Structure probing data (2A3 and DMS) for a 177-nucleotide construct. DMS (dimethyl sulfate) methylates the pairing face of unpaired adenines and cytosines. For 2A3 the reverse transcriptase was SuperScript II with manganese.
RNA sequence: GGGAACGACUCGAGUAGAGUCGAAAAGGCGUGCCUAAUACAUGCAAGUCGAACGAUGAAGCUUCUAGCUUGCUAGAAGUGAAUUAGUGGCGCACGGGUGAGUAAGGUAUAGUUAAUCUGCCCUACAGUAUCCGCUCUACUUCGGUAGAGCGGAUACAAAAGAAACAACAACAACAAC
Reactivity to 2A3 in 0.01 (KOAc 150mM, MgCl2 10mM, bicine 150mM(pH8.5), 24C), signal-to-noise 2, nucleotides 027 to 126: g110g010c000g010u020g000c020c040u020a020a090u090a040c030a050u050g030c110a170a070g010u010c030g000a040a000c030g030a040u050g000a120a020g000c000u000u000c000u000a040g040c030u060u160g010c000u000a000g000a000a000g020u060g040a000a000u020u050a090g020u050g050g000c000g030c000a000c000g000g000g100u060g030a100g000u120a030a000g070g000u000a030u010a120g030u020u010a070a060u100c030u200g030c000c000c000u020a070c080a000
Reactivity to DMS in 0.01 (KOAc 150mM, MgCl2 10mM, bicine 150mM(pH8.5), 24C), signal-to-noise 1, nucleotides 027 to 126: g000g000c060g000u000g000c000c020u030a120a070u200a030c030a020u010g020c080a140a100g000u000c030g000a210a000c040g000a010u000g000a300a140g000c000u030u000c000u000a000g000c010u000u030g100c000u000a050g000a030a000g000u000g000a130a090u150u010a050g010u000g000g000c070g000c110a070c090g050g000g000u090g000a060g000u000a160a040g000g000u000a030u060a000g000u000u010a080a300u000c110u080g030c060c040c040u000a070c250a110
The data come from the RNA Mapping Database (RMDB), library RFM100. The DMS profile rests on 1,026 reads. For 2A3, 788 sequencing reads were counted. The RNA was probed in 150 mM KOAc, 10 mM MgCl2 and 150 mM bicine (pH 8.5) at 24 C.